The data come from the RNA Mapping Database (RMDB), library TTRDEL. Chemical mapping of a 177-nucleotide RNA with DMS. High DMS reactivity at an A or C suggests that its Watson-Crick edge is free. For DMS, 798 sequencing reads were counted. Reactivities are rounded to 0.1 and cut off at 0 and 3. The RNA was probed in 150 mM KOAc, 10 mM MgCl2 and 150 mM bicine (pH 8.5) at 24 C.
RNA sequence: GGGAACGACUCGAGUAGAGUCGAAAAGAUAUGGAACCGAUCCCAGCGAAGAACUCGGAAACGAGGGAGCUGAGGAUUCGGUUCCUAAGUCAAAAGACCCUAUUUGACUUCGGUCAAAUAGGGUCAAGGGAUACGUACUGUUCGCAGUACGUAUCCCAAAAGAAACAACAACAACAAC
Reactivity to DMS in 0.01 (KOAc 150mM, MgCl2 10mM, bicine 150mM(pH8.5), 24C), signal-to-noise 1, nucleotides 027 to 126: g010a080u010a300u000g010g010a000a000c000c000g020a040u000c000c000c000a010g000c000g000a080a160g010a060a240c010u010c020g020g000a210a090a210c000g000a020g000g000g020a090g000c000u010g000a180g000g000a010u010u010c000g000g000u010u000c000c000u010a000a110g000u000c040a090a100a160a160g010a000c000c000c030u010a000u000u000u000g000a020c000u000u010c260g030g040u000c020a010a010a000u000a020g000g010g050u000c010a000a040